[RMDB]
Structure probing data (2A3 and DMS) for a 177-nucleotide construct. The reactions ran in a buffer of 150 mM KOAc, 10 mM MgCl2 and 150 mM bicine (pH 8.5), at 24 C. The DMS profile rests on 1,389 reads. It was measured as part of the RMDB library OK2TST. For DMS the reverse transcriptase was MarathonRT.
RNA sequence: GGGAACGACUCGAGUAGAGUCGAAAAUGCGCCAAUCCCUGCCACUACGCCCAGCGGUUCGCGGCGGGUAUACACAAAGGACGUUUCACGCAACGGGAUCUGGCUGCCUUCCAGCGCCGGGAUCAGCGUUGAACUAGCCAUUCGUGGCUAGUUCAACAAAAGAAACAACAACAACAAC
Reactivity to 2A3 in 0.01 (KOAc 150mM, MgCl2 10mM, bicine 150mM(pH8.5), 24C), signal-to-noise 1, nucleotides 027 to 126: u100g000c040g010c000c000a010a050u020c010c000c000u030g070c040c030a030c060u110a030c060g010c020c000c030a020g010c040g040g130u080u040c100g000c000g030g030c000g000g050g030u020a040u050a050c190a000c010a020a070a020g080g000a010c010g000u000u040u150c070a060c060g040c020a070a060c020g060g040g010a050u040c050u050g020g010c050u090g000c000c000u070u070c020c030a010g030c000g010c000c020g000g020g010a040u060c020a040g010c030
Reactivity to DMS in 0.01 (KOAc 150mM, MgCl2 10mM, bicine 150mM(pH8.5), 24C), signal-to-noise 2, nucleotides 027 to 126: u000g010c030g010c000c030a150a080u010c060c010c000u000g020c050c030a050c170u000a040c130g030c060c040c050a150g030c060g010g000u010u000c070g040c090g020g000c050g000g000g010u000a030u000a130c140a070c090a020a140a180g000g000a090c050g000u010u010u000c100a110c130g020c060a140a060c090g000g000g010a030u000c040u000g000g000c020u000g020c020c030u010u000c180c120a110g000c080g010c000c050g020g020g000a030u000c020a070g000c120